[RMDB]
RNA sequence: GGGAACGACUCGAGUAGAGUCGAAAAAAAAACGGCAGCAAGCCGAGCAACGCGAGCAAGGCGAGCAAGUACAGCAAGUACAGCAACAUGAGCAACAUGAGCAAGUAGAGCAACUACAGCAAAAAAACGUCAUUAGUAAGUUCGCUUACUAAUGACGAAAAGAAACAACAACAACAAC
Reactivity to DMS in 0.01 (KOAc 150mM, MgCl2 10mM, bicine 150mM(pH8.5), 24C), signal-to-noise 2, nucleotides 027 to 126: a060a060a100a050a030c070g000g000c000a060g000c130a080a110g020c060c050g030a190g000c050a070a060c160g010c110g000a070g000c010a120a110g010g000c060g000a160g000c110a030a090g010u010a030c050a070g040c050a020a020g000u000a010c030a050g010c030a030a060c070a040u000g020a100g000c070a020a030c070a020u000g000a110g030c030a010a060g010u000a020g000a130g000c070a020a060c090u010a040c070a070g030c060a000a000a110a050a030a100a090
Reactivity to 2A3 in 0.01 (KOAc 150mM, MgCl2 10mM, bicine 150mM(pH8.5), 24C), signal-to-noise 2, nucleotides 027 to 126: a000a000a000a000a000c040g010g000c030a060g020c030a080a060g010c050c010g020a000g020c020a050a130c040g020c040g080a020g000c020a040a010g040g000c010g020a020g000c040a080a010g010u020a040c020a030g000c030a090a030g010u000a050c000a060g000c010a030a040c020a110u090g050a040g070c010a010a050c010a040u050g020a040g000c000a120a010g000u040a030g040a010g030c020a050a030c010u080a040c030a030g050c070a040a030a040a030a000a040a030
Structure probing data (DMS and 2A3) for a 177-nucleotide construct. The reactions ran in a buffer of 150 mM KOAc, 10 mM MgCl2 and 150 mM bicine (pH 8.5), at 24 C.